[RMDB]
RNA sequence: GGGAACGACUCGAGUAGAGUCGAAAAUAGAUACAAGUACUAGAUCAACUAGAAAAUAAAUAAAUACAAAAGCAACCUCUCGAAACUAGUUCAUCUAGUACAAACGAGACGUUGCAAAAAUAAAAUAACGUAGCUGAUUAUUCGUAAUCAGCUACGUAAAAGAAACAACAACAACAAC
Reactivity to 2A3 in 0.01 (KOAc 150mM, MgCl2 10mM, bicine 150mM(pH8.5), 24C), signal-to-noise 1, nucleotides 027 to 126: u070a010g150a010u070a020c040a090a150g000u060a090c000u000a010g040a060u060c000a150a090c030u010a050g000a160a110a040a060u260a070a110a000u300a030a040a000u280a130c040a010a100a080a000g050c010a000a000c000c010u000c000u030c010g010a000a000a000c000u000a000g020u100u130c010a040u100c000u000a000g020u010a030c000a000a000a000c000g010a000g000a010c010g030u050u000g000c010a000a000a000a150a000u030a050a170a000a010u070a020